RNA sequence: GGGAACGACUCGAGUAGAGUCGAAAAGAUAUGGACGAUCACGGGAGCUCUGUGUCGGAAACGACACUGAGCAUCGAUCGUGGUCGUCCUAAGUCAAAAGCGGUUAAAUCUUCGGAUUUAACCGCAAUCUUAUUACCAUCUUCGGAUGGUAAUAAGAAAAAGAAACAACAACAACAAC
Reactivity to DMS in 0.01 (KOAc 150mM, MgCl2 10mM, bicine 150mM(pH8.5), 24C), signal-to-noise 5, nucleotides 027 to 126: g010a010u000a040u010g000g000a020c010g010a010u000c000a010c000g020g000g010a190g020c000u000c000u000g000u000g020u000c000g020g000a000a010a020c000g010a010c000a010c000u000g000a010g040c000a140u010c300g010a090u000c000g030u000g000g010u000c000g010u000c000c000u000a000a050g000u000c010a100a080a160a140g000c000g020g010u000u000a000a000a010u000c000u000u010c270g020g000a010u000u000u000a000a000c000c010g010c000a000a010
Reactivity to 2A3 in 0.01 (KOAc 150mM, MgCl2 10mM, bicine 150mM(pH8.5), 24C), signal-to-noise 3, nucleotides 027 to 126: g010a000u000a010u040g000g000a000c000g010a010u010c010a000c010g070g130g170a190g000c010u030c020u030g020u000g000u000c000g000g030a020a000a000c000g000a000c010a010c010u030g000a000g000c010a000u030c060g040a050u010c010g000u010g000g000u000c000g000u010c000c000u000a000a000g000u000c010a000a010a050a130g000c010g000g000u020u020a010a010a010u020c000u050u170c300g070g010a000u000u000u010a000a000c000c010g000c000a000a000